[RMDB]
RNA sequence: GGGAACGACUCGAGUAGAGUCGAAAACGAGCAGUGCCUGGGGAAGAUCCGCCUGCUCGCGGUCGCAUCUCUGGUUCACGGACGGAAGAAGGAAGUUUCCAUUCGCGCAAUUGGCGACGCACUGCAGGGGCUCAUUAAAUUUCGAUUUAAUGAGCCCAAAAGAAACAACAACAACAAC
Reactivity to DMS in 0.01 (KOAc 150mM, MgCl2 10mM, bicine 150mM(pH8.5), 24C), signal-to-noise 3, nucleotides 027 to 126: c070g000a000g000c010a000g060u040g010c060c110u020g040g000g030g030a110a070g000a130u030c040c020g000c000c020u000g000c010u020c000g000c060g000g000u000c090g040c040a070u000c020u000c030u010g000g000u000u030c020a070c080g010g020a040c070g010g000a030a020g020a130a090g040g040a130a130g020u000u000u000c000c020a110u030u020c010g000c040g010c070a070a030u000u010g010g010c010g000a070c090g030c030a020c000u000g000c070a080g000
Reactivity to 2A3 in 0.01 (KOAc 150mM, MgCl2 10mM, bicine 150mM(pH8.5), 24C), signal-to-noise 6, nucleotides 027 to 126: c010g000a010g010c010a000g000u080g190c050c140u290g020g000g000g010a050a070g020a100u020c010c000g000c000c000u010g000c000u000c000g000c010g000g040u030c080g000c040a100u010c020u010c020u050g070g000u050u020c030a030c030g010g020a010c010g030g010a030a040g040a050a050g240g040a050a070g040u040u010u010c010c010a030u030u050c040g000c000g020c070a030a090u070u090g020g000c000g020a020c010g000c020a020c020u070g000c060a080g020
This 177-nucleotide RNA was probed chemically with DMS and 2A3. For 2A3, 5,955 sequencing reads were counted. DMS adducts were read by reverse transcription with MarathonRT.